[RMDB]
RNA sequence: GGGAACGACUCGAGUAGAGUCGAAAACGGUAUUGGUCAAGGCUAUACCAACAGCGCACCUUCAAAAGGGCGCUUAAUCCCCGGCCAAGCGCCGAAAUAUGAAUAGACACCGCUGGGCUGGUAGGGCAAAACAUGGCGAUCUUCGGAUCGCCAUGAACUACCAAAAGAAGUUCGCUUCUUUUGGUAGAAAAGAAACAACAACAACAAC
Reactivity to DMS in 0.01 (KOAc 150mM, MgCl2 10mM, bicine 150mM(pH8.5), 24C), signal-to-noise 2, nucleotides 027 to 156: c050g010g030u010a030u000u020g030g050u000c060a080a100g050g020c020u010a090u000a090c030c010a060a100c210a070g030c010g030c010a010c000c010u010u000c160a100a120a260a130g000g010g020c020g030c020u010u000a030a100u000c030c020c000c040g010g000c020c010a070a050g020c040g020c030c020g010a030a030a100u000a150u020g010a160a150u000a130g040a130c070a050c080c010g000c010u020g010g010g060c050u030g030g040u000a050g000g030g000c030a050a050a140a210c000a000u000g040g010c010g010a010u000c010u010u010c300g060g010a010u000c000g010c000c000a010u000g010a020a130
Reactivity to 2A3 in 0.01 (KOAc 150mM, MgCl2 10mM, bicine 150mM(pH8.5), 24C), signal-to-noise 1, nucleotides 027 to 156: c040g000g020u000a050u100u240g050g030u060c050a080a090g100g000c000u030a000u000a030c010c000a030a030c020a030g000c000g030c040a300c110c000u080u070c040a090a060a060a020g040g010g000c000g000c000u000u000a010a000u000c000c000c000c000g010g000c000c000a070a000g010c000g000c100c030g020a020a070a040u270a090u070g070a040a100u100a070g110a020c030a000c030c040g020c020u050g020g040g000c000u000g000g050u140a140g010g000g000c020a020a000a000a090c000a000u000g000g000c000g000a000u000c000u000u010c090g030g000a010u000c000g000c000c000a000u000g000a000a000
The data come from the RNA Mapping Database (RMDB), library M2RFOK.
The record gives the reactivity of an RNA of 207 nucleotides to DMS and 2A3.
High 2A3 reactivity points to a flexible backbone, as in loops and unpaired stretches.
For 2A3, 826 sequencing reads were counted.
The RNA was probed in 150 mM KOAc, 10 mM MgCl2 and 150 mM bicine (pH 8.5) at 24 C.
For DMS, 3,585 sequencing reads were counted.
DMS adducts were read by reverse transcription with MarathonRT.